[RMDB]
RNA sequence: GGGAACGACUCGAGUAGAGUCGAAAAGUAUCAAGGAGUUGUAGCAGUUCAACCAGGUGGCCAAGGCCUACCAGGACCGCUAUCAGGACCUGGGGGCCUACAGUUCUGCCAGGAAGUGCCUGGCCAAACAGAGGCAGAGGAUGCUGCAAGAGAGAAAGUACUAAUGAGUCUUCGGACUCAUUAGUACAAAAGAAACAACAACAACAAC
Reactivity to 2A3 in 0.01 (KOAc 150mM, MgCl2 10mM, bicine 150mM(pH8.5), 24C), signal-to-noise 2, nucleotides 027 to 156: g030u040a010u250c030a050a050g090g010a000g090u010u030g000u070a060g020c020a000g010u080u110c060a100a020c020c000a020g090g070u080g110g000c060c000a030a010g000g000c010c000u060a300c220c000a000g000g040a030c010c010g020c140u110a130u280c180a130g040g030a070c000c030u030g000g000g010g000g100c050c000u040a000c000a000g000u010u010c020u050g000c000c000a060g020g070a230a090g060u040g090c000c000u000g020g000c000c000a100a100a000c010a030g040a040g050g030c010a000g010a070g050g000a020u040g010c020u000g000c020a010a020g020a000g070a000g060a140a070a020
Reactivity to DMS in 0.01 (KOAc 150mM, MgCl2 10mM, bicine 150mM(pH8.5), 24C), signal-to-noise 1, nucleotides 027 to 156: g000u030a080u020c100a050a110g020g000a260g020u000u000g050u020a020g000c050a090g010u010u000c060a110a090c070c020a110g000g060u000g020g040c020c040a040a130g050g040c000c020u000a000c040c010a060g020g020a110c020c010g070c140u000a110u000c210a110g000g040a160c010c040u020g000g010g060g000g030c020c020u000a020c060a110g000u000u010c010u000g020c010c020a170g020g000a060a150g030u010g040c000c000u020g030g000c030c080a010a030a080c040a090g000a110g010g030c040a090g020a070g000g000a160u020g000c000u000g000c020a030a020g000a110g030a110g010a100a150a230